[RMDB]
RNA sequence: GGGAACGACUCGAGUAGAGUCGAAAAAUGAACUGCUGUGUUCUCUCUAGUCUUGCUGGUGACUCGGCCGAGCGUGUUGAAAGGCAAGCACUUAAUUUCUUGAGGAAUAAUACGGCGUCUCUCGGCGCAGCAUAGCCCAUUUCGAUGGGCUAUGCUGAAAAGAAACAACAACAACAAC
Reactivity to 2A3 in 0.01 (KOAc 150mM, MgCl2 10mM, bicine 150mM(pH8.5), 24C), signal-to-noise 7, nucleotides 027 to 126: a010u260g030a060a050c040u080g010c010u020g000u020g010u060u020c170u000c000u000c040u060a020g020u010c000u000u010g010c040u020g010g070u150g030a020c000u000c010g050g000c010c010g010a020g030c030g000u020g030u050u030g270a240a040a010g010g000c010a010a010g020c030a040c020u160u300a130a180u190u180u100c100u090u160g010a010g020g060a060a060u100a150a040u070a070c010g010g030c010g080u020c020u000c000u000c110g010g030c040g020
Reactivity to DMS in 0.01 (KOAc 150mM, MgCl2 10mM, bicine 150mM(pH8.5), 24C), signal-to-noise 3, nucleotides 027 to 126: a050u030g020a120a100c060u020g010c020u000g020u000g050u010u000c040u020c010u000c050u030a040g020u010c000u000u030g020c010u020g000g010u070g000a050c060u000c000g000g030c000c010g000a020g000c040g010u000g000u000u000g010a120a110a170g000g000c020a010a050g000c140a070c100u010u010a040a050u010u030u030c080u000u020g010a070g000g020a080a020u010a050a080u020a170c070g030g010c000g000u030c060u010c010u000c030g000g000c020g000